Structure probing data (DMS and 2A3) for a 177-nucleotide construct. 2A3 adducts were read by reverse transcription with SuperScript II with manganese. Conditions: 150 mM KOAc, 10 mM MgCl2 and 150 mM bicine (pH 8.5), 24 C.
RNA sequence: GGGAACGACUCGAGUAGAGUCGAAAAAAAAAGAUAUGGAUCCCAGUGGAAGGUGGUGGCGUUGAAAGAAAUUCGGAAACGAAUUUCUGGAGCCAUGUUACAGCCCACGGGAUCCUAAGUCAAAAAAGAUCUACUAUAUCUUCGGAUAUAGUAGAUCAAAAGAAACAACAACAACAAC
Reactivity to DMS in 0.01 (KOAc 150mM, MgCl2 10mM, bicine 150mM(pH8.5), 24C), signal-to-noise 3, nucleotides 027 to 126: a060a060a120a080a080g000a030u010a300u010g020g000a000u000c000c000c000a160g080u010g000g010a080a140g020g020u000g010g020u000g000g010c000g000u000u020g010a180a100a010g000a000a000a010u000u000c000g000g000a070a050a100c000g010a020a000u000u000u000c000u000g000g010a030g010c000c000a000u000g010u010u010a040c050a180g000c300c010c000a020c020g000g000g010a000u000c000c000u000a010a060g000u020c010a000a050a120a100a070a090
Reactivity to 2A3 in 0.01 (KOAc 150mM, MgCl2 10mM, bicine 150mM(pH8.5), 24C), signal-to-noise 1, nucleotides 027 to 126: a030a010a000a050a040g060a000u060a020u040g000g000a000u000c000c010c080a060g000u040g000g030a230a150g120g070u210g000g030u020g000g030c030g190u300u090g020a020a010a000g000a010a000a010u010u000c010g000g000a020a010a040c000g000a010a000u000u000u040c010u000g000g020a000g000c020c000a030u010g010u010u030a100c030a050g170c000c000c000a010c000g000g020g000a000u000c010c010u000a020a000g000u020c040a040a000a000a030a100a140